Chemical mapping of a 207-nucleotide RNA with 2A3 and DMS. The DMS profile rests on 7,865 reads. For DMS the reverse transcriptase was MarathonRT.
[RMDB]
RNA sequence: GGGAACGACUCGAGUAGAGUCGAAAACUGCAUCACCUGAUCACUGAUGGCUCAACCGUAUCCGGCGGUACAACUGAAUACUUGUAGCUGCCUUUUGAGCGGGUUGGCUGCAAUCCGAAACGGAGAGAAAACCUAAUUACGUUCGCGUAAUUAGGAAGAAGUUAAUAUACUUCGGUAUAUUAACUUCAAAAGAAACAACAACAACAAC
Reactivity to 2A3 in 0.01 (KOAc 150mM, MgCl2 10mM, bicine 150mM(pH8.5), 24C), signal-to-noise 8, nucleotides 027 to 156: c030u050g010c010a020u010c000a020c020c020u050g050a060u050c030a020c050u040g020a030u040g100g010c050u040c090a060a050c030c000g020u030a090u050c030c020g030g000c010g010g020u090a060c060a110a050c110u170g070a140a070u130a190c050u020u030g000u020a010g030c010u000g000c000c000u040u080u080u150g080a060g020c060g010g020g010u120u230g040g000c020u010g000c000a010a030u040c030c010g050a100a100a130c050g040g000a050g010a010g020a040a100a020a020c000c000u000a000a000u000u000a000c010g010u010u050c190g000c000g110u000a000a000u000u000a000g000g000a000a010
Reactivity to DMS in 0.01 (KOAc 150mM, MgCl2 10mM, bicine 150mM(pH8.5), 24C), signal-to-noise 3, nucleotides 027 to 156: c050u010g030c040a090u000c020a040c030c010u000g000a100u000c060a090c090u000g020a040u000g020g000c020u000c040a050a080c060c110g010u000a060u000c030c040g020g040c010g030g030u010a060c130a080a090c050u010g020a070a050u010a040c110u000u010g020u010a050g020c020u010g000c010c010u000u000u010u000g010a090g000c080g020g020g010u000u010g020g000c030u010g000c000a040a090u000c040c010g020a070a110a120c050g000g010a210g010a260g010a140a040a080a100c010c010u000a010a010u000u000a000c000g030u000u010c300g020c010g030u000a010a000u000u000a010g020g000a000a030

Source: RMDB library M2RFPK, as collected in RNAgym. Conditions: 150 mM KOAc, 10 mM MgCl2 and 150 mM bicine (pH 8.5), 24 C.